[RMDB]
RNA sequence: GGGAACGACUCGAGUAGAGUCGAAAAUUUAUACUUGCUCUAUCUCAACAAACAACGGCAUUAUCUUUAAAAAUGGCAUCGGUAGCACUACUCUGACCGCUUACGCUUACGAUAACGGCGUGGAUGUUGCAGACAAGCUACAAUUCCGAUGGAGCAAUCGAGUUAUCCAUUUCGAUGGAUAACUCGAAAAAGAAACAACAACAACAAC
Reactivity to 2A3 in 0.01 (KOAc 150mM, MgCl2 10mM, bicine 150mM(pH8.5), 24C), signal-to-noise 3, nucleotides 027 to 156: u020u120u070a190u030a110c050u020u020g010c000u010c000u010a050u030c030u010c120a040a150c030a050a230a090c060a130a030c120g090g010c040a030u040u080a120u150c090u090u290u200a140a160a050a020a020u080g020g020c050a060u080c150g050g000u000a000g000c020a010c110u070a030c010u050c010u020g090a170c000c040g000c030u060u050a020c030g000c030u070u030a040c090g140a170u110a300a010c060g000g000c000g000u020g000g000a040u080g010u070u070g020c000a000g010a050c050a080a020g000c000u010a010c030a090a080u230u020c060c040g000a000u000g000g010a000g000c010a000a020
Reactivity to DMS in 0.01 (KOAc 150mM, MgCl2 10mM, bicine 150mM(pH8.5), 24C), signal-to-noise 1, nucleotides 027 to 156: u000u000u000a110u000a080c090u000u000g010c000u000c020u000a060u000c030u000c040a060a110c080a070a170a150c050a110a060c040g000g020c040a080u000u010a070u000c060u020u000u000a050a070a130a060a100u000g040g040c050a000u000c060g020g000u000a020g030c060a090c040u000a130c030u000c070u020g050a080c010c000g060c050u010u010a080c040g040c040u000u000a120c130g030a180u000a130a040c070g010g020c000g010u000g020g010a100u000g030u000u000g000c000a050g010a220c110a020a110g010c040u000a000c020a060a270u000u000c020c000g000a150u000g020g000a040g020c000a000a160
Conditions: 150 mM KOAc, 10 mM MgCl2 and 150 mM bicine (pH 8.5), 24 C. The record gives the reactivity of an RNA of 207 nucleotides to 2A3 and DMS. DMS adducts were read by reverse transcription with MarathonRT. For 2A3 the reverse transcriptase was SuperScript II with manganese. The 2A3 profile rests on 1,540 reads. The data come from the RNA Mapping Database (RMDB), library OK3TST.